[RMDB]
RNA sequence: GGGAACGACUCGAGUAGAGUCGAAAACCUCACUACAUUUUACUGUUCCUAAAGAAUUUGUGACAGGUACAGUAAAACGUAUUGCAAGGUUUAUCAGUUCCUAUAAACUGGUAAAUAACAAUAUAUGAAAAGCAAAGACUGUUCGCAGUCUUUGCAAGGGCAACAAUAAGUUCGCUUAUUGUUGCCCAAAAGAAACAACAACAACAAC
Reactivity to 2A3 in 0.01 (KOAc 150mM, MgCl2 10mM, bicine 150mM(pH8.5), 24C), signal-to-noise 3, nucleotides 027 to 156: c000c000u060c000a040c020u110a010c000a050u000u000u000u000a010c000u000g000u020u070c010c010u070a080a130a070g130a270a300u230u260u250g120u100g070a070c090a060g000g000u010a000c000a000g000u000a000a000a000a010c010g000u000a010u000u040g020c080a130a030g100g000u000u000u000a000u020c000a010g010u040u030c000c020u050a040u220a090a030a000c000u000g000g010u000a040a000a020u140a090a030c030a090a060u120a020u110a060u220g080a110a090a000a020g000c000a000a000a000g010a000c000u000g030u060u050c110g000c100a000g000u000c000u020u000u000g000c000a000a000

This 207-nucleotide RNA was probed chemically with 2A3. Values cover nucleotides 27 to 156.